[RMDB]
RNA sequence: GGGAACGACUCGAGUAGAGUCGAAAAGUCUACCCGUUCGCGGGUAGACAAAAUUAAUUCAAAGAUUAAUAAGUAUGAAUUCGUAUCAUACAAAACGAAAAAAAAGUAACACGUUCGCGUGUUACAACACCAUAGUUAAGUUCGCUUAACUAUGGUGAAAAGAAACAACAACAACAAC
Reactivity to 2A3 in 0.01 (KOAc 150mM, MgCl2 10mM, bicine 150mM(pH8.5), 24C), signal-to-noise 3, nucleotides 027 to 126: g000u000c000u010a010c000c000c000g010u020u020c250g000c020g040g030g000u000a000g000a000c000a000a000a000a000u000u010a010a010u030u050c020a080a130a050g060a040u090u130a140a100u170a300a070g000u010a020u030g010a020a070u120u120c090g010u220a050u120c010a000u010a030c030a030a110a010a030c080g110a170a010a020a000a010a000a000a020g000u010a000a000c020a000c000g010u030u050c270g000c000g040u000g000u010u010a000c000a000a000
Reactivity to DMS in 0.01 (KOAc 150mM, MgCl2 10mM, bicine 150mM(pH8.5), 24C), signal-to-noise 3, nucleotides 027 to 126: g000u010c020u000a010c000c000c010g020u010u010c210g040c020g030g020g010u000a000g000a000c000a000a050a080a060u000u000a010a030u020u000c030a130a120a180g010a070u010u000a020a020u020a100a240g000u000a010u000g000a030a170u000u000c170g000u010a090u000c000a000u000a000c010a090a080a020a110c250g030a030a020a010a040a080a020a140a170g020u000a000a010c010a010c010g020u020u010c210g020c000g020u000g000u000u000a000c000a040a130
Source: RMDB library M2PK50, as collected in RNAgym. Chemical mapping of a 177-nucleotide RNA with 2A3 and DMS. For 2A3 the reverse transcriptase was SuperScript II with manganese. The DMS profile rests on 2,529 reads. Values cover nucleotides 27 to 126. For 2A3, 3,569 sequencing reads were counted. Conditions: 150 mM KOAc, 10 mM MgCl2 and 150 mM bicine (pH 8.5), 24 C.